[RMDB]
RNA sequence: GGGAACGACUCGAGUAGAGUCGAAAACCCCUUCAGUUCGCUGAAGGGGAAAGGGUUCUCCCGGCCGCCGUGAACCCAGGCUAAAAGUUAAGGUAGGUGGGCAAACCCUACUCUUCGGAGUAGGGAAGCAUAAGGACAUGUUCGCAUGUCCUUAUGCAAAAGAAACAACAACAACAAC
Reactivity to DMS in 0.01 (KOAc 150mM, MgCl2 10mM, bicine 150mM(pH8.5), 24C), signal-to-noise 3, nucleotides 027 to 126: c000c000c000c000u020u000c000a020g020u010u020c230g010c000u000g010a030a030g000g000g010g000a010a000a070g010g000g020u000u000c020u000c000c020c030g010g050c010c010g000c010c010g000u000g000a020a050c020c010c000a220g000g020c080u000a030a070a070a100g010u010u000a110a130g010g020u000a050g010g010u000g030g020g000c050a100a060a180c010c000c000u000a000c000u000c000u010u000c180g010g020a030g000u000a010g010g000g000a000a010
Reactivity to 2A3 in 0.01 (KOAc 150mM, MgCl2 10mM, bicine 150mM(pH8.5), 24C), signal-to-noise 3, nucleotides 027 to 126: c000c000c000c010u000u000c000a070g000u010u130c170g000c080u000g000a000a000g000g000g000g030a050a050a030g050g010g000u060u020c040u050c010c000c010g080g010c030c020g000c000c000g070u040g040a020a010c010c010c020a020g070g000c010u020a110a120a040a050g060u110u110a070a040g040g040u050a010g000g040u100g020g010g010c010a030a040a150c010c010c000u010a000c000u030c010u020u090c190g090g000a000g000u000a000g000g010g000a000a000